[RMDB]
RNA sequence: GGGAACGACUCGAGUAGAGUCGAAAAAUUUUGGGAAUCGGCCACUACCUUGCAGUCACGUGAUGAAAAGACACAGGUGACACUGAUCCGGAUUUGGUAGUUGACAAAUCCUCCAUGCCGAGAUUAGCAAGCUUGAUGGGUUCGCCCAUCAAGCUUGAAAAGAAACAACAACAACAAC
Reactivity to DMS in 0.01 (KOAc 150mM, MgCl2 10mM, bicine 150mM(pH8.5), 24C), signal-to-noise 2, nucleotides 027 to 126: a260u000u010u000u000g000g000g000a100a210u030c030g030g000c000c030a020c130u000a050c050c040u030u070g050c110a100g000u000c010a010c080g020u000g000a120u000g010a210a160a100a180g070a240c010a080c030a020g020g080u000g000a070c200a210c060u000g030a050u030c050c070g010g010a080u000u030u000g000g000u010a050g000u040u020g010a140c270a080a020a070u000c000c000u070c070c020a050u010g010c000c010g000a040g000a010u080u020a030g000
Reactivity to 2A3 in 0.01 (KOAc 150mM, MgCl2 10mM, bicine 150mM(pH8.5), 24C), signal-to-noise 1, nucleotides 027 to 126: a010u130u050u050u110g140g010g000a100a000u030c000g000g000c170c000a000c020u000a010c000c000u000u010g000c000a000g030u000c000a000c040g220u040g000a250u000g010a050a300a000a000g010a010c000a010c000a090g000g200u000g000a000c000a020c200u040g000a060u040c000c000g000g130a030u090u030u000g070g000u000a050g040u010u140g000a000c000a000a000a050u030c030c020u080c020c000a010u040g000c000c040g070a080g000a080u170u000a000g020

Conditions: 150 mM KOAc, 10 mM MgCl2 and 150 mM bicine (pH 8.5), 24 C. Chemical mapping of a 177-nucleotide RNA with DMS and 2A3. Reactivities are rounded to 0.1 and cut off at 0 and 3. For 2A3 the reverse transcriptase was SuperScript II with manganese. DMS adducts were read by reverse transcription with MarathonRT.